Annotation: The record gives the reactivity of an RNA of 177 nucleotides to DMS and 2A3.
[RMDB]
RNA sequence: GGGAACGACUCGAGUAGAGUCGAAAAGAUAUGGAAACUUCACGGGACAACAGCUCGGAAACGAGACAUGUCCGUGACUGGUUUCCUAAGUCAAACCUACAACUAGAGUUCGCUCUAGUUGUAGGAAGAUAUUAGCCCCGUUCGCGGGGCUAAUAUCAAAAGAAACAACAACAACAAC
Reactivity to DMS in 0.01 (KOAc 150mM, MgCl2 10mM, bicine 150mM(pH8.5), 24C), signal-to-noise 2, nucleotides 027 to 126: g000a090u040a230u000g010g000a000a000a040c000u000u000c010a000c000g020g030g020a010c040a040a100c210a220g000c010u000c000g020g010a100a150a120c000g010a010g010a090c070a130u000g000u010c000c000g000u000g000a010c300u030g020g010u000u010u000c000c000u000a040a110g010u000c040a110a150a240c010c000u000a000c010a000a000c010u020a000g000a040g000u000u000c280g010c010u000c000u000a000g000u000u000g000u000a000g010g000a010a060
Reactivity to 2A3 in 0.01 (KOAc 150mM, MgCl2 10mM, bicine 150mM(pH8.5), 24C), signal-to-noise 1, nucleotides 027 to 126: g020a030u120a030u160g000g030a000a030a030c000u050u010c000a000c070g130g170g100a010c030a140a030c030a200g060c030u000c000g010g100a080a060a070c030g000a010g060a040c020a130u050g010u000c000c000g020u000g030a030c070u050g000g070u030u010u000c000c010u030a130a030g040u050c030a030a040a080c000c000u000a000c000a000a000c000u010a000g010a010g040u090u080c280g140c170u030c000u000a000g020u010u000g000u000a000g000g000a000a020
The RNA was probed in 150 mM KOAc, 10 mM MgCl2 and 150 mM bicine (pH 8.5) at 24 C. The DMS profile rests on 822 reads. Reactivities are given for positions 27 through 126.